[RMDB]
RNA sequence: GGGAACGACUCGAGUAGAGUCGAAAAGUGGCGAUUUCGUGCGGCAGUCGAUCUAGCGCACGCACGUAUUCGGUGACGACCGCGCGCCCAUGGCGCGUCCCGCACCGCGUGCCGGUCGGCGUCGCGGGGAUCCCUAAUCGUUCGCGAUUAGGGAUCCAAAAGAAACAACAACAACAAC
Reactivity to 2A3 in 0.01 (KOAc 150mM, MgCl2 10mM, bicine 150mM(pH8.5), 24C), signal-to-noise 2, nucleotides 027 to 126: g090u080g080g040c090g090a140u020u110u080c090g060u110g010c030g010g000c040a100g020u040c030g000a060u010c050u160a070g030c040g000c110a030c000g000c010a030c060g070u090a160u080u180c070g030g050u060g030a140c020g000a090c050c050g050c010g000c000g000c000c070c050a100u260g010g000c020g000c000g030u040c040c000c000g070c000a020c000c050g010c000g000u000g000c020c020g000g030u040c040g000g010c000g000u020c000g010c000g000g030
Reactivity to DMS in 0.01 (KOAc 150mM, MgCl2 10mM, bicine 150mM(pH8.5), 24C), signal-to-noise 3, nucleotides 027 to 126: g010u000g020g030c070g000a140u000u010u010c080g000u000g020c000g010g000c010a090g050u000c040g000a050u000c040u010a070g030c190g020c010a040c010g000c030a050c220g020u010a100u010u020c070g000g010u010g010a090c040g000a130c110c230g010c000g000c000g000c010c050c150a190u000g010g020c000g000c010g000u010c130c040c030g030c070a040c020c030g000c010g010u000g010c020c020g000g010u000c020g010g010c000g000u000c010g010c010g000g000